[RMDB]
RNA sequence: GGGAACGACUCGAGUAGAGUCGAAAAUGGCAUCUGGUUGGUAGUGCCUGCCUCAUAUUAGCCAGGGACAAAGCAACGCCUUGUUUAUCCCAGCUUGGCUUUUGGUCUGUGCCUGUGCCUAGUUCAUCACUGCGCGUGAAUUCGUUCACGCGCAGUGAAAAGAAACAACAACAACAAC
Reactivity to 2A3 in 0.01 (KOAc 150mM, MgCl2 10mM, bicine 150mM(pH8.5), 24C), signal-to-noise 1, nucleotides 027 to 126: u170g000g000c040a040u140c110u160g020g000u150u000g090g010u070a000g000u060g080c000c000u010g060c000c000u060c050a110u220a060u040u300a080g000c000c010a030g060g020g000a040c100a030a070a030g100c010a100a000c000g000c030c040u000u070g000u040u100u090a020u040c000c000c000a030g000c000u000u000g000g000c000u240u020u000u070g060g030u070c000u000g040u050g020c000c000u000g070u120g000c020c000u040a040g110u220u080c000a000u000